Record summary: Structure probing data (2A3 and DMS) for a 177-nucleotide construct. As a SHAPE reagent, 2A3 marks flexible, mostly unpaired nucleotides at the ribose 2'-OH. The RNA was probed in 150 mM KOAc, 10 mM MgCl2 and 150 mM bicine (pH 8.5) at 24 C.
RNA sequence: GGGAACGACUCGAGUAGAGUCGAAAAGGGUGAGUAGCCUAAGGCGUGGCGGAACAUUCCGGCCGAGGGAAUUCGGCAAGUUGGCCCCGUAUCUUUGGUAGAAGGGGUGCCUGCGGUUUAGCAGACCGAUAGCGAGAAAAUUCGUUUUCUCGCUAUCAAAAGAAACAACAACAACAAC
Reactivity to 2A3 in 0.01 (KOAc 150mM, MgCl2 10mM, bicine 150mM(pH8.5), 24C), signal-to-noise 7, nucleotides 027 to 126: g020g000g010u040g020a050g020u050a010g010c000c010u020a030a030g030g000c010g020u010g020g000c030g030g020a050a040c060a120u120u110c040c010g040g010c000c010g010a010g040g070g060a070a110u130u040c010g000g010c030a050a050g060u070u060g060g000c000c000c000c000g040u070a100u050c060u050u170u140g160g010u120a040g020a130a020g020g000g000g000u010g030c000c000u010g000c010g000g000u050u060u080a020g000c010a000g010a030c010c040
Reactivity to DMS in 0.01 (KOAc 150mM, MgCl2 10mM, bicine 150mM(pH8.5), 24C), signal-to-noise 8, nucleotides 027 to 126: g010g010g020u000g000a080g000u010a110g010c020c020u010a100a080g010g000c030g010u000g010g020c020g010g000a080a110c180a160u020u010c030c040g010g020c010c010g000a050g010g020g030a130a130u020u000c010g000g000c010a070a080g010u010u000g000g010c020c000c010c010g000u000a080u010c020u000u010u030g010g010u020a030g000a080a140g010g000g000g010u000g010c060c010u010g000c020g000g010u010u020u010a100g010c080a060g000a090c110c140